Chemical mapping of a 177-nucleotide RNA with DMS and 2A3. The DMS profile rests on 763 reads. Reactivities are given for positions 27 through 126. The reactions ran in a buffer of 150 mM KOAc, 10 mM MgCl2 and 150 mM bicine (pH 8.5), at 24 C. The data come from the RNA Mapping Database (RMDB), library RFMREP. DMS (dimethyl sulfate) methylates the pairing face of unpaired adenines and cytosines.

RNA sequence: GGGAACGACUCGAGUAGAGUCGAAAAGCAGCCCUUCGGGGCUGCAAAACGGGAUGAGGAAGCCGAGGACACCUGAUGGAUGAUGACUCUUCGCUUCGCCGACCAAACCGUUCCGUUCGCGGAACGGGGUAUAAACCUCCUUCGGGAGGUUUAUACCAAAAGAAACAACAACAACAAC
Reactivity to DMS in 0.01 (KOAc 150mM, MgCl2 10mM, bicine 150mM(pH8.5), 24C), signal-to-noise 1, nucleotides 027 to 126: g010c000a010g030c000c000c000u010u020c210g060g000g060g000c000u000g000c000a000a030a040a160c110g010g000g000a120u000g030a170g010g000a020a020g040c120c100g000a020g000g020a080c010a020c030c020u000g050a190u020g020g010a080u000g010a080u010g000a100c140u000c030u020u000c050g000c000u010u000c010g010c010c010g000a130c040c050a080a130a300c010c010g000u000u000c010c000g000u010u020c150g000c010g020g020a000a000c020g000g000
Reactivity to 2A3 in 0.01 (KOAc 150mM, MgCl2 10mM, bicine 150mM(pH8.5), 24C), signal-to-noise 1, nucleotides 027 to 126: g000c010a000g030c000c000c070u010u020c180g000g000g020g040c000u020g000c020a020a000a000a000c030g000g040g040a200u170g040a100g200g000a030a010g050c090c010g040a020g010g000a030c010a010c060c050u160g050a130u250g160g060a020u070g030a030u080g070a110c030u000c000u040u060c050g020c020u010u000c030g030c040c030g010a030c010c030a100a020a010c010c000g000u010u010c020c010g040u020u010c160g000c000g160g000a000a000c000g000g000